Chemical mapping of a 177-nucleotide RNA with 2A3 and DMS. The data come from the RNA Mapping Database (RMDB), library TTRINS. The reactions ran in a buffer of 150 mM KOAc, 10 mM MgCl2 and 150 mM bicine (pH 8.5), at 24 C. The 2A3 profile rests on 6,358 reads.

[RMDB]
RNA sequence: GGGAACGACUCGAGUAGAGUCGAAAAGAUAUGGAGUGAGGGAGCGUAAAUCAGCGUGACCCUUCCACUACAUCGGAAACGAUGUACGAAGCACGCUGAUUUACGCAUCGAUCUCACUCCUAAGUCACUAACCAGUGUUGUUCGCAACACUGGUUAGAAAAGAAACAACAACAACAAC
Reactivity to 2A3 in 0.01 (KOAc 150mM, MgCl2 10mM, bicine 150mM(pH8.5), 24C), signal-to-noise 1, nucleotides 027 to 126: g000a010u070a020u180g000g020a010g010u000g010a000g020g030g030a040g000c010g000u000a000a000a000u000c010a010g010c000g030u060g100a280c070c020c000u000u000c000c000a030c000u020a010c000a010u010c010g000g060a080a040a100c030g020a020u030g000u010a010c300g020a000a020g040c000a010c000g000c000u010g000a000u000u010u000a000c010g000c000a010u020c000g000a010u000c000u000c000a000c000u020c000c000u010a000a010g010u000c020a010
Reactivity to DMS in 0.01 (KOAc 150mM, MgCl2 10mM, bicine 150mM(pH8.5), 24C), signal-to-noise 4, nucleotides 027 to 126: g030a040u010a300u020g020g020a050g010u000g000a020g000g010g010a060g020c000g000u000a000a010a020u000c010a000g010c020g010u000g000a230c300c300c080u010u010c030c110a180c300u010a020c000a000u000c000g000g000a110a070a270c000g010a010u000g020u000a010c250g000a030a010g000c010a000c000g010c000u000g010a020u000u000u000a010c020g010c010a020u010c200g000a050u010c000u000c000a010c010u000c000c000u000a000a080g010u000c040a280
Reactivities are rounded to 0.1 and cut off at 0 and 3.
The DMS profile rests on 3,356 reads.